Structure probing data (2A3 and DMS) for a 207-nucleotide construct.
RNA sequence: GGGAACGACUCGAGUAGAGUCGAAAACUUAGUGUAUAAGGACAGGAAAAUGUACCGUCAUUAUGGUGUGCAAUGUGGCAAUGUGGUGUUCCAUAUGGACUCUGAGGACAUCAUGAAAUCUGCCCUCAAUGGAGAGGUCACCAUCAAGCAAGAGAAACAGUCUAACACUUUUCGAAGUGUUAGACUGAAAAGAAACAACAACAACAAC
Reactivity to 2A3 in 0.01 (KOAc 150mM, MgCl2 10mM, bicine 150mM(pH8.5), 24C), signal-to-noise 8, nucleotides 027 to 156: c020u070u060a040g010u060g060u090a050u040a180a100g030g010a020c050a060g070g070a040a060a080a130u130g030u050a090c010c020g030u020c030a030u040u120a050u090g030g000u040g020u030g040c050a050a080u110g040u100g060g000c020a030a060u100g010u010g040g000u020g030u090u040c010c000a040u050a090u200g100g030a070c050u000c060u160g030a050g010g010a010c000a010u030c000a010u050g050a060a060a060u040c060u040g010c000c010c000u030c020a070a160u130g020g020a060g010a010g060g010u030c010a020c040c010a030u050c020a030a030g090c010a040a010g020a000g020a080a090a010
Reactivity to DMS in 0.01 (KOAc 150mM, MgCl2 10mM, bicine 150mM(pH8.5), 24C), signal-to-noise 5, nucleotides 027 to 156: c030u000u000a080g020u010g030u000a090u000a060a100g020g020a090c030a070g010g000a070a030a110a130u000g020u000a080c000c030g000u000c040a070u000u000a050u010g020g020u000g030u000g020c050a070a100u010g020u010g000g010c040a060a110u000g020u000g010g010u010g020u010u000c030c040a120u000a110u010g010g010a120c040u000c060u000g020a150g020g010a020c020a020u000c020a080u000g000a050a070a140u000c040u010g020c030c000c010u010c040a060a080u010g000g010a120g000a080g030g010u000c050a070c040c030a060u000c080a050a110g020c050a070a090g000a120g000a160a060a230

DMS adducts were read by reverse transcription with MarathonRT. Reactivities are given for positions 27 through 156. For DMS, 13,295 sequencing reads were counted. 2A3 adducts were read by reverse transcription with SuperScript II with manganese. It was measured as part of the RMDB library OK3TST.